[RMDB]
RNA sequence: GGGAACGACUCGAGUAGAGUCGAAAAACCCUGGAGGCCCAAUCCCCUUCUAGCCUAGAUAAAAACAGAUUAGGAUUGGGACAACUCACUCAGUUGUCCGCUCGACUAGCGGGAGCUAGAAGGGUCUGCCGGAGGAUGCGGAGUCUUUCCGACUAGCGUCAAUAUGAGAGUUCGCUCUCAUAUUGACAAAAGAAACAACAACAACAAC
Reactivity to 2A3 in 0.01 (KOAc 150mM, MgCl2 10mM, bicine 150mM(pH8.5), 24C), signal-to-noise 2, nucleotides 027 to 156: a000c000c020c020u020g050g010a020g030g000c010c040c050a070a080u030c010c000c000c030u000u030c000u030a000g000c030c010u060a120g040a160u260a200a150a000a020a020c070a040g090a130u090u090a050g050g000a050u030u120g040g000g010a000c020a040a020c000u080c100a160c060u220c080a080g020u020u000g020u040c020c000g110c040u040c010g100a090c030u050a010g020c020g020g100g000a020g010c000u000a000g000a020a000g040g000g000u040c030u060g030c020c000g000g030a020g040g010a030u090g030c060g070g100a020g030u000c000u110u160u040c000c000g050a040c040u090a050g080c030
Reactivity to DMS in 0.01 (KOAc 150mM, MgCl2 10mM, bicine 150mM(pH8.5), 24C), signal-to-noise 1, nucleotides 027 to 156: a120c000c000c050u000g010g010a130g020g040c060c030c010a070a210u000c010c010c000c050u020u000c000u000a120g010c020c050u000a190g020a300u000a090a080a160a230a100c020a140g020a170u000u000a140g030g040a210u000u010g020g050g000a040c030a040a020c010u000c010a150c230u000c050a090g060u000u000g020u000c040c000g010c000u000c020g030a240c040u000a030g020c040g020g070g010a100g030c010u000a020g000a090a110g010g000g020u000c030u000g030c000c050g000g010a050g010g000a080u020g010c090g000g000a270g020u000c000u020u000u000c000c000g020a110c060u010a070g000c140